[RMDB]
RNA sequence: GGGAACGACUCGAGUAGAGUCGAAAAGAAGAGACAUCAGCGCUGCCGCUCCGUCUCUACACAUCUGUAAAGGGAGCUCCCAGGGACCUGGCACGUCCACAGGUGCGUGUGUUCAGAGAAAGACGGAAACCCAGCCUACAAGGGUUCACAGACACCAGCCUACCUAUUACUUCGGUAAUAGGUAGGCAAAAGAAACAACAACAACAAC
Reactivity to 2A3 in 0.01 (KOAc 150mM, MgCl2 10mM, bicine 150mM(pH8.5), 24C), signal-to-noise 1, nucleotides 027 to 156: g110a020a000g050a000g030a040c020a090u110c090a100g030c050g010c000u040g030c040c030g030c040u000c030c020g030u040c020u030c000u040a010c070a030c010a130u070c090u080g000u080a080a060a030g050g030g000a040g040c050u070c060c010c000a050g050g010g000a030c000c000u010g010g000c050a000c060g030u000c000c030a070c020a050g000g010u030g030c060g040u020g000u020g000u170u130c030a030g010a000g000a110a120a030g030a030c020g110g010a020a020a010c000c030c010a000g000c030c020u040a050c060a070a090g150g000g010u050u080c040a030c010a100g210a020c040a010c180c020a010
Chemical mapping of a 207-nucleotide RNA with 2A3. Source: RMDB library OK3TST, as collected in RNAgym. Reactivities are rounded to 0.1 and cut off at 0 and 3. For 2A3, 584 sequencing reads were counted.